[RMDB]
RNA sequence: GGGAACGACUCGAGUAGAGUCGAAAAAGCUAAAAACUUAGCAUGCUUAUCCUUUUUAGGAUCCGCAGUGUAAACCCCAUCAACACCAUUCUUGCCAAUUAGAAUAAUAUCGGCUUGCAUUUGGGUAGACAAACUACUAGUUCGCUAGUAGUUUGUCAAAAGAAACAACAACAACAAC
Reactivity to DMS in 0.01 (KOAc 150mM, MgCl2 10mM, bicine 150mM(pH8.5), 24C), signal-to-noise 3, nucleotides 027 to 126: a080g010c020u020a050a030a070a100a100c060u000u000a070g030c010a190u000g010c020u010u000a060u000c000c000u010u000u000u000u020a040g040g000a010u000c120c160g010c020a020g020u000g020u000a060a130a220c120c000c000c110a070u000c180a050a070c120a100c010c030a030u010u000c000u000u000g000c010c000a000a050u030u000a080g020a130a120u000a070a080u000a000u000c040g010g010c000u010u000g000c100a040u020u000u010g030g030g010u000a110
Reactivity to 2A3 in 0.01 (KOAc 150mM, MgCl2 10mM, bicine 150mM(pH8.5), 24C), signal-to-noise 1, nucleotides 027 to 126: a020g010c020u050a000a000a020a050a200c100u050u050a000g000c030a050u030g000c000u000u020a000u010c010c000u100u010u000u140u300a020g010g000a010u000c010c030g020c020a080g040u010g060u180a130a130a110c020c040c020c000a050u150c030a040a120c030a020c040c000a000u000u040c010u000u010g010c010c000a070a060u050u030a090g140a300a130u120a260a020u110a070u080c010g020g010c000u000u010g000c030a050u050u070u110g060g000g020u040a030
Record summary
Structure probing data (DMS and 2A3) for a 177-nucleotide construct. The RNA was probed in 150 mM KOAc, 10 mM MgCl2 and 150 mM bicine (pH 8.5) at 24 C. For DMS the reverse transcriptase was MarathonRT.